[RMDB]
RNA sequence: GGGAACGACUCGAGUAGAGUCGAAAAUGUCGGGUGGGGAACAGCAGAUGGUUGCGAUGGGACGCGCCAUGAUGACCAAGCCCGGCGUGCUGCUGCUGGACGAGCCGACGAUGGGCCUUGCGCCGCACUGAUCAAAAUCCUUCGGGAUUUUGAUCAGAAAAGAAACAACAACAACAAC
Reactivity to 2A3 in 0.01 (KOAc 150mM, MgCl2 10mM, bicine 150mM(pH8.5), 24C), signal-to-noise 6, nucleotides 027 to 126: u120g010u010c010g010g010g030u100g030g130g010g050a120a110c030a050g110c020a040g020a170u040g040g020u230u300g030c030g010a070u160g050g080g160a040c010g000c000g000c000c000a020u080g090a130u070g020a030c020c010a030a020g000c000c000c000g000g000c020g020u030g000c020u010g000c000u000g000c000u030g000g040a040c010g050a060g020c020c020g020a080c040g040a140u130g010g050g020c020c020u080u100g020c080g010c030c010g020c010a030
Reactivity to DMS in 0.01 (KOAc 150mM, MgCl2 10mM, bicine 150mM(pH8.5), 24C), signal-to-noise 2, nucleotides 027 to 126: u050g000u020c070g020g020g070u010g020g020g020g010a090a100c050a100g010c070a040g010a080u010g010g020u010u010g070c000g010a220u050g000g000g020a200c000g000c020g030c000c000a020u030g000a160u010g010a140c020c040a090a140g000c010c020c000g000g000c020g010u000g000c030u000g010c030u000g000c000u010g000g000a160c020g000a110g010c040c010g050a110c130g020a080u010g000g000g000c010c010u010u010g000c070g010c000c000g010c100a170
The record gives the reactivity of an RNA of 177 nucleotides to 2A3 and DMS.
Values cover nucleotides 27 to 126.
It was measured as part of the RMDB library OK1LIB.
For DMS the reverse transcriptase was MarathonRT.
The reactions ran in a buffer of 150 mM KOAc, 10 mM MgCl2 and 150 mM bicine (pH 8.5), at 24 C.